The record gives the reactivity of an RNA of 207 nucleotides to DMS and 2A3.

RNA sequence: GGGAACGACUCGAGUAGAGUCGAAAACUGGUCUCCAGCCCUGCCCGACGGCUUUCUCUGGUUGCCCUCAACGUGUUCAUCAGGAAGGGAUAUCUUACUUUUUGUUGGGUGGAGUUCAUUAACGAUGCCUUUCUGCGAUAUUUCUGUAGAAGGCUCCCAUCCAGUAAAUUUUCGAAUUUACUGGAUGAAAAGAAACAACAACAACAAC
Reactivity to DMS in 0.01 (KOAc 150mM, MgCl2 10mM, bicine 150mM(pH8.5), 24C), signal-to-noise 1, nucleotides 027 to 156: c070u010g010g030u010c030u000c020c010a140g000c020c010c020u000g000c010c010c060g010a090c060g020g000c020u000u000u000c030u020c020u010g030g000u010u010g010c050c010c030u000c090a110a080c050g000u000g020u010u010c110a140u000c030a060g000g000a080a040g020g000g000a090u010a020u000c060u000u010a100c070u000u000u020u010u000g010u000u000g010g040g010u000g000g020a210g020u010u040c020a070u020u010a090a100c080g020a120u000g020c000c020u010u000u010c010u010g070c040g010a140u000a090u000u010u000c050u000g000u000a080g010a030a070g020g000c010u000c010c090
Reactivity to 2A3 in 0.01 (KOAc 150mM, MgCl2 10mM, bicine 150mM(pH8.5), 24C), signal-to-noise 2, nucleotides 027 to 156: c020u040g030g050u090c030u040c060c010a080g070c020c010c010u050g000c000c000c010g050a060c030g020g000c000u000u080u060c100u000c010u070g050g000u010u060g030c000c000c000u160c100a110a150c070g040u100g080u180u130c070a080u030c040a070g100g000a010a050g050g000g050a020u040a040u150c060u080u180a130c040u120u190u090u150u240g030u020u020g050g000g000u050g020g020a080g020u060u020c050a070u080u260a140a010c130g070a060u070g000c000c000u040u300u120c010u030g000c010g000a010u020a130u250u270u090c040u130g000u000a000g000a000a000g000g000c000u020c000c000